[RMDB]
RNA sequence: GGGAACGACUCGAGUAGAGUCGAAAAUGCCUACCGAAAGUUUGACCCCUUCUAAUCCAUUAUGGCUCCACUGGCUUUGUGUGAUCUCUCUAAGCCUAUUCCCAUGGGACUUUCACACUAUAGAGUAGAGGAAUAAUCUGUUCGCAGAUUAUUCCUCAAAAGAAACAACAACAACAAC
Reactivity to 2A3 in 0.01 (KOAc 150mM, MgCl2 10mM, bicine 150mM(pH8.5), 24C), signal-to-noise 1, nucleotides 027 to 126: u000g060c010c000u050a060c060c020g200a220a140a070g030u050u290u300g260a240c000c010c010c000u010u010c030u080a060a100u050c010c000a010u110u210a090u210g000g040c000u040c000c000a010c090u050g000g000c010u000u100u050g050u010g000u060g080a140u040c010u010c010u000c040u110a020a010g000c010c000u030a110u040u070c000c020c000a000u040g020g000g030a020c020u020u100u110c000a000c010a010c070u080a120u050a200g160a020g100u110a020
Reactivity to DMS in 0.01 (KOAc 150mM, MgCl2 10mM, bicine 150mM(pH8.5), 24C), signal-to-noise 2, nucleotides 027 to 126: u000g010c000c000u000a090c150c060g010a070a120a090g020u000u000u000g010a270c050c010c010c020u000u000c030u000a080a120u010c020c030a060u010u000a070u020g000g020c040u000c050c070a040c080u000g010g010c040u000u000u010g010u000g020u010g010a040u000c060u000c020u000c030u000a060a160g010c020c020u000a120u010u000c000c000c010a100u000g020g000g000a060c080u000u000u010c040a070c060a040c060u010a120u010a100g000a070g020u010a090